[RMDB]
This 177-nucleotide RNA was probed chemically with DMS and 2A3. The 2A3 profile rests on 12,395 reads. The DMS profile rests on 9,164 reads. Conditions: 150 mM KOAc, 10 mM MgCl2 and 150 mM bicine (pH 8.5), 24 C. For DMS the reverse transcriptase was MarathonRT.
RNA sequence: GGGAACGACUCGAGUAGAGUCGAAAAUCUAUCACCAGCCCAUGUUUACGACACCAAUGGGCUGUUGCAAAUUACGUAUAGCUCUUGCAACAUCGUGUCGAAACGUUCCCAAGCUAUACGCCACAAACAUAAUAACGGGGUUCGCCCCGUUAUUAUGAAAAGAAACAACAACAACAAC
Reactivity to DMS in 0.01 (KOAc 150mM, MgCl2 10mM, bicine 150mM(pH8.5), 24C), signal-to-noise 7, nucleotides 027 to 126: u000c070u000a100u010c050a080c080c080a080g010c010c000c000a030u010g000u000u000u010a110c110g000a060c070a050c090c130a120a050u000g000g010g000c020u000g000u000u000g010c090a040a080a120u010u000a090c010g010u010a010u000a010g010c010u000c160u000u000g000c040a040a030c060a080u010c130g010u000g010u000c090g010a070a070a180c060g000u000u010c000c000c010a170a030g010c000u010a000u000a010c000g020c160c160a070c150a060a070a130
Reactivity to 2A3 in 0.01 (KOAc 150mM, MgCl2 10mM, bicine 150mM(pH8.5), 24C), signal-to-noise 8, nucleotides 027 to 126: u020c010u030a120u100c020a010c060c020a010g030c010c010c000a030u070g060u060u130u090a170c130g030a030c020a020c060c060a090a070u040g010g030g000c010u010g000u000u000g000c000a010a050a140u240u080a060c020g000u010a000u000a010g010c010u040c040u150u090g020c020a030a020c010a140u150c070g030u020g050u080c030g030a130a090a010c040g010u020u000c000c000c010a000a000g000c000u010a010u000a020c010g020c020c000a110c030a030a190a020